Background: Structure probing data (2A3) for a 207-nucleotide construct. 2A3 adducts were read by reverse transcription with SuperScript II with manganese. Values cover nucleotides 27 to 156. It was measured as part of the RMDB library OK3TST.

RNA sequence: GGGAACGACUCGAGUAGAGUCGAAAAAGCGGCGGUGGUUGACAGGUGAAGCCGGCCACGACGUCCUCGAGCCGCUUCCGGCCGACGGGAUGUGUGCGGAGCCGGUCUCGACGGCAGUGAACGAUCCGGCAACUGACGAGCCGUCGCUGAUCGAGCCGAUGGAUUUCAGAUUCGUCUGAAAUCCAUCAAAAGAAACAACAACAACAAC
Reactivity to 2A3 in 0.01 (KOAc 150mM, MgCl2 10mM, bicine 150mM(pH8.5), 24C), signal-to-noise 2, nucleotides 027 to 156: a000g000c020g010g000c010g000g050u070g050g070u150u130g050a070c010a020g000g100u210g240a070a010g000c000c030g010g020c000c010a000c010g090a070c030g040u060c010c010u020c000g000a010g020c010c050g010c010u080u030c050c010g070g030c000c010g080a130c130g120g140g080a130u250g120u080g010u080g130c000g000g020a030g010c100c150g030g020u070c000u000c000g020a030c050g000g000c010a000g010u010g070a120a050c030g010a030u020c000c010g000g030c020a060a000c030u010g010a030c000g020a010g000c000c000g000u010c000g000c000u000g000a030u070c020g050a020g060c020c030